[RMDB]
Structure probing data (2A3) for a 177-nucleotide construct. The RNA was probed in 150 mM KOAc, 10 mM MgCl2 and 150 mM bicine (pH 8.5) at 24 C. Reactivities are rounded to 0.1 and cut off at 0 and 3. For 2A3 the reverse transcriptase was SuperScript II with manganese.
RNA sequence: GGGAACGACUCGAGUAGAGUCGAAAACAAACAAAGUCGUCGGCGCCGGGAAAGACCACCGCGUGCGAGUUCAGAUGCGGUGGCUUUAGUGGUGGUCGCGUCGCCUUCACCUCUGACCACGAACAAACGCUGAUGAUGAGUUCGCUCAUCAUCAGCGAAAAGAAACAACAACAACAAC
Reactivity to 2A3 in 0.01 (KOAc 150mM, MgCl2 10mM, bicine 150mM(pH8.5), 24C), signal-to-noise 2, nucleotides 027 to 126: c010a000a030a010c030a030a160a070g050u050c020g020u030c010g100g060c070g000c000c000g100g000g000a000a110a000g040a200c010c000a000c000c020g000c000g050u200g220c070g060a100g020u260u210c050a040g010a130u080g010c000g000g000u020g000g000c000u070u040u000a050g000u030g130g010u030g050g000u010c010g000c000g020u010c020g000c000c000u110u050c040a060c000c020u030c010u000g060a020c000c000a060c070g140a100a050c050a030a070a000